Structure probing data (2A3 and DMS) for a 177-nucleotide construct. Source: RMDB library M2PK50, as collected in RNAgym. The RNA was probed in 150 mM KOAc, 10 mM MgCl2 and 150 mM bicine (pH 8.5) at 24 C.
RNA sequence: GGGAACGACUCGAGUAGAGUCGAAAAACAUUAAGUUUCGACUUAAUGUAAACCCGAUGAAGCCGCACAUACGGAGCUUCAUACAUCUAAGAGUGCAAAUAAAAAGUUGAUCCUUCGGGAUCAACAAAGCUAAUCACAUAUUCGUAUGUGAUUAGCUAAAAGAAACAACAACAACAAC
Reactivity to 2A3 in 0.01 (KOAc 150mM, MgCl2 10mM, bicine 150mM(pH8.5), 24C), signal-to-noise 7, nucleotides 027 to 126: a010c000a000u000u010a010a010g000u010u030u160c160g060a010c000u000u000a000a000u000g000u000a080a020a040c000c000c010g000a020u020g000a000a010g000c020c040g110c180a060c040a170u300a100c150g180g020a070g020c010u000u000c010a010u040a050c060a070u060c060u170a130a040g110a040g140u080g050c060a050a090a060u180a060a150a030a030a020g000u000u000g000a000u010c010c000u030u060c260g110g010g000a000u010c000a000a000c000a000a010
Reactivity to DMS in 0.01 (KOAc 150mM, MgCl2 10mM, bicine 150mM(pH8.5), 24C), signal-to-noise 5, nucleotides 027 to 126: a040c000a000u000u000a000a010g010u000u000u000c160g030a050c000u000u000a000a000u000g000u000a030a070a130c000c000c010g020a040u010g000a010a010g020c000c100g020c060a080c160a130u000a120c130g010g010a170g000c010u010u000c010a010u010a070c120a070u010c130u010a070a070g010a080g020u000g020c070a070a090a080u010a050a050a080a110a100g000u000u010g010a000u000c000c000u000u010c270g040g010g010a000u000c000a000a000c000a040a060